[RMDB]
RNA sequence: GGGAACGACUCGAGUAGAGUCGAAAACGGUUACGCCUUCUUUACCGUUACCAAGGAAGGUACUCGGCCAUGCUAAGGGAAGCAUUAUUCCUUAGGCGCAUGUCGCCGCCAGCAUGGUGUGAGGGGAAAAAGUAUGCUGGGUUCGCCCAGCAUACAACAAUCCUAUGUCGUUCGCGACAUAGGAUUGAAAAGAAACAACAACAACAAC
Reactivity to 2A3 in 0.01 (KOAc 150mM, MgCl2 10mM, bicine 150mM(pH8.5), 24C), signal-to-noise 6, nucleotides 027 to 156: c020g000g010u030u040a030c050g000c000c000u000u010c000u010u050u070a030c030c040g210u090u060a020c010c020a010a010g090g000a000a010g010g000u060a070c010u010c000g030g000c000c000a000u000g020c010u060a070a080g000g010g020a040a000g020c090a220u140u140a140u150u130c020c000u040u080a070g010g000c000g010c050a190u270g120u270c020g010c010c000g010c040c040a000g000c000a010u010g010g010u070g160u170g040a030g040g030g030g090a040a070a020a040a000g000u000a000u000g000c000u000g000g030g040u040u070c200g110c020c000c000a000g000c000a000u000a000c000a000a010
Reactivity to DMS in 0.01 (KOAc 150mM, MgCl2 10mM, bicine 150mM(pH8.5), 24C), signal-to-noise 2, nucleotides 027 to 156: c030g010g010u000u010a080c020g020c010c000u010u000c010u000u010u000a020c000c020g000u000u020a060c160c040a050a020g000g000a040a020g020g010u000a040c020u010c000g000g030c000c000a020u000g020c010u000a170a150g020g020g010a040a040g020c180a190u000u010a120u000u000c020c000u000u010a060g020g010c000g030c030a160u000g010u000c000g000c030c000g020c140c100a050g000c010a020u000g020g020u010g030u000g000a050g000g000g040g000a070a070a100a130a210g000u000a010u010g020c000u000g010g000g020u010u010c300g010c020c000c000a020g000c000a000u000a000c000a080a140
Conditions: 150 mM KOAc, 10 mM MgCl2 and 150 mM bicine (pH 8.5), 24 C. Structure probing data (2A3 and DMS) for a 207-nucleotide construct. For 2A3, 6,734 sequencing reads were counted. 2A3 is a SHAPE reagent: it acylates the 2'-hydroxyl of flexible nucleotides of all four kinds. It was measured as part of the RMDB library M2RFPK.